[RMDB]
RNA sequence: GGGAACGACUCGAGUAGAGUCGAAAAGAAAAUUAGGACCAUCUUAAAACGUAUGUGAAUGACCAACUCUACUUGCAGGUUGACACACGAGUUAACUUGUCGCAUACGUAAAGGAAAAUUGCAAGAACCGGAUCCGAUUAUUCGUAAUCGGAUCCGGAAAAGAAACAACAACAACAAC
Reactivity to 2A3 in 0.01 (KOAc 150mM, MgCl2 10mM, bicine 150mM(pH8.5), 24C), signal-to-noise 1, nucleotides 027 to 126: g120a000a020a000a020u300u210a060g000g130a150c000c000a020u000c000u190u040a100a230a110a000c000g000u000a090u000g000u000g000a270a300u300g050a050c130c000a280a260c000u070c050u200a090c000u000u070g000c010a210g000g000u000u000g020a000c020a070c050a120c300g110a000g000u000u050a000a020c000u000u300g020u110c000g000c000a000u000a000c000g020u020a030a040a040g040g000a000a000a200a200u160u250g050c000a060a050g020a000a000